[RMDB]
RNA sequence: GGGAACGACUCGAGUAGAGUCGAAAAGAUAUGGAACCGUAACCAUCGAUCUAUCAUUCGGAAACGAAUGUAUAGGGAGGGAGAAGGUUCCUAAGUCAAAACGUACAGGUCUUCGGACCUGUACGAACUAUUACCGCUGCUUCGGCAGCGGUAAUAGAAAAGAAACAACAACAACAAC
Reactivity to 2A3 in 0.01 (KOAc 150mM, MgCl2 10mM, bicine 150mM(pH8.5), 24C), signal-to-noise 1, nucleotides 027 to 126: g000a010u050a020u150g030g020a020a000c010c020g000u030a010a030c000c010a150u300c050g020a060u050c000u000a010u020c000a000u020u010c000g000g050a100a000a000c020g030a030a010u010g040u130a010u030a000g030g030g030a050g050g020g050a040g020a030a050g000g050u000u000c000c000u020a090a010g070u010c040a030a020a110a070c030g000u010a000c010a000g000g010u020c000u070u160c270g090g000a000c000c000u000g010u000a000c000g000a000a000
Reactivity to DMS in 0.01 (KOAc 150mM, MgCl2 10mM, bicine 150mM(pH8.5), 24C), signal-to-noise 1, nucleotides 027 to 126: g000a010u000a300u020g000g000a000a000c000c010g020u000a140a220c000c000a250u000c290g000a080u010c000u000a010u000c000a000u000u000c000g000g000a090a040a160c000g030a000a000u000g000u010a000u040a000g010g000g010a030g000g000g000a040g010a210a210g000g010u000u000c010c000u020a000a110g000u000c000a050a110a120a300c010g000u000a000c010a000g000g000u000c000u000u010c300g000g000a000c000c000u000g000u000a030c000g010a030a100
Source: RMDB library TTRDEL, as collected in RNAgym.
This 177-nucleotide RNA was probed chemically with 2A3 and DMS.
The reactions ran in a buffer of 150 mM KOAc, 10 mM MgCl2 and 150 mM bicine (pH 8.5), at 24 C.
For 2A3, 1,705 sequencing reads were counted.
DMS adducts were read by reverse transcription with MarathonRT.
For DMS, 828 sequencing reads were counted.
2A3 adducts were read by reverse transcription with SuperScript II with manganese.